Conditions: 150 mM KOAc, 10 mM MgCl2 and 150 mM bicine (pH 8.5), 24 C. Structure probing data (2A3 and DMS) for a 177-nucleotide construct. It was measured as part of the RMDB library OK1LIB. For DMS the reverse transcriptase was MarathonRT. Reactivities are given for positions 27 through 126.

RNA sequence: GGGAACGACUCGAGUAGAGUCGAAAAUAUGAGAGAUCACCAUGUUUGAACUCAGAGCAUGAAUCCUCUGGAAUGAUAGAUGAAUAGCGGAGGAGACGUUAAACAUCUCACGUAUGAGUAUUAGAAAGGGUAAACUAUUGUUCGCAAUAGUUUACCCAAAAGAAACAACAACAACAAC
Reactivity to 2A3 in 0.01 (KOAc 150mM, MgCl2 10mM, bicine 150mM(pH8.5), 24C), signal-to-noise 4, nucleotides 027 to 126: u230a060u040g060a040g000a010g020a050u070c030a020c100c000a000u000g030u030u040u020g090a140a050c030u040c080a030g010a020g050c020a040u040g010a030a030u000c000c000u010c030u070g090g080a090a030u130g080a070u060a150g020a030u030g000a070a040u020a010g010c030g000g010a060g020g130a020g060a030c010g030u030u050a000a040a010c000a030u030c010u040c030a020c020g010u060a130u040g060a020g010u030a150u090u130a070g090a050a130a020
Reactivity to DMS in 0.01 (KOAc 150mM, MgCl2 10mM, bicine 150mM(pH8.5), 24C), signal-to-noise 4, nucleotides 027 to 126: u020a030u020g010a040g000a160g020a030u010c080a080c140c010a020u010g020u010u020u010g010a100a100c060u010c070a140g000a010g000c030a040u000g000a190a150u030c060c010u000c010u010g000g000a120a130u040g000a090u020a030g000a120u010g000a070a190u020a010g000c010g020g030a100g010g020a040g000a110c080g000u000u030a050a080a180c180a070u000c000u010c070a090c090g000u000a010u000g000a080g000u000a070u030u030a130g000a070a110a090